Background: Chemical mapping of a 207-nucleotide RNA with 2A3 and DMS. It was measured as part of the RMDB library M2RFPK. For DMS, 7,340 sequencing reads were counted. For 2A3 the reverse transcriptase was SuperScript II with manganese. The RNA was probed in 150 mM KOAc, 10 mM MgCl2 and 150 mM bicine (pH 8.5) at 24 C.

RNA sequence: GGGAACGACUCGAGUAGAGUCGAAAAGCUUCCUCUUGGCGCGGAGGUUUAACUGCGCUCGCUCCCCAUAUCGGUGUGGGCGCACCGGAUUUACAAAUUAAAGUCCUUUAGGGAGCGAAAAGGGACAAAAACUUGCACGUGUUCGCACGUGCAAGAACAAAGUCAUAUUCUUCGGAAUAUGACUUUGAAAAGAAACAACAACAACAAC
Reactivity to 2A3 in 0.01 (KOAc 150mM, MgCl2 10mM, bicine 150mM(pH8.5), 24C), signal-to-noise 4, nucleotides 027 to 156: g020c030u110u060c010c000u010c020u010u030g000g000c000g000c010g010g010a010g010g030u070u150u080a030a010c020u030g000c000g010c000u000c000g000c000u000c000c000c000c010a050u080a080u140c010g010g010u010g000u020g000g030g000c010g000c000a010c000c000g020g000a010u130u260u160a160c250a060a010a000u130u190a090a110a010g010u000c000c030u010u030u020a010g000g000g000a000g000c010g010a010a000a000a000g030g000g010a040c080a050a130a050a050a050c010u010u010g010c000a000c000g000u020g030u070u110c200g030c110a000c000g000u000g000c000a000a000g000a000a010
Reactivity to DMS in 0.01 (KOAc 150mM, MgCl2 10mM, bicine 150mM(pH8.5), 24C), signal-to-noise 3, nucleotides 027 to 156: g020c130u000u010c000c000u000c020u000u010g020g010c010g060c010g010g000a140g030g010u010u000u000a070a140c030u010g020c020g020c010u000c000g010c000u020c000c000c000c050a200u010a110u000c030g000g040u000g020u000g020g020g010c060g000c000a000c010c010g010g020a270u000u010u000a200c110a100a050a130u000u000a070a060a090g020u000c010c030u010u010u000a040g000g020g010a010g030c010g000a020a000a040a010g000g000g000a060c070a070a070a080a180a080c010u000u000g010c000a010c000g040u010g010u000u000c270g040c020a000c000g010u000g000c000a000a010g010a060a110